[RMDB]
RNA sequence: GGGAACGACUCGAGUAGAGUCGAAAAGCUCCAGCCCGAAGCACUGGGAGCGAUUCAGGAGGUAACAAAUGAAUUGAAGUACUACCAGAAAAGGGCCGUGCAAAGCGGUCCAGCGAACCAUGCAGGCGCUCACCUAACAUUUCGAUGUUAGGUGAGCAAAAGAAACAACAACAACAAC
Reactivity to 2A3 in 0.01 (KOAc 150mM, MgCl2 10mM, bicine 150mM(pH8.5), 24C), signal-to-noise 3, nucleotides 027 to 126: g050c020u020c020c000a070g030c010c000c000g130a070a000g000c020a020c060u040g000g010g020a020g020c010g000a010u030u000c000a000g010g050a040g030g060u140a130a090c030a020a090a040u020g020a010a020u050u040g030a080a010g060u130a040c040u040a040c020c060a010g030a030a120a030a030g000g010g000c000c000g000u040g020c110a200a110a050g060c010g000g020u040c010c000a010g000c020g070a010a030c010c020a050u110g010c040a020g030g010c040
Reactivity to DMS in 0.01 (KOAc 150mM, MgCl2 10mM, bicine 150mM(pH8.5), 24C), signal-to-noise 2, nucleotides 027 to 126: g010c010u000c090c010a140g000c030c010c000g010a130a240g000c110a210c050u000g000g000g000a050g000c000g000a030u000u000c000a030g000g020a300g000g020u030a080a170c040a030a300a230u030g000a030a010u000u050g030a100a150g000u050a150c010u000a070c000c000a030g010a130a090a070a200g000g000g000c000c030g020u000g000c140a090a090a150g000c020g000g040u000c000c000a020g030c030g000a100a030c090c060a010u010g000c020a140g000g070c130
Annotation: This 177-nucleotide RNA was probed chemically with 2A3 and DMS. It was measured as part of the RMDB library RFM100. For 2A3, 2,397 sequencing reads were counted.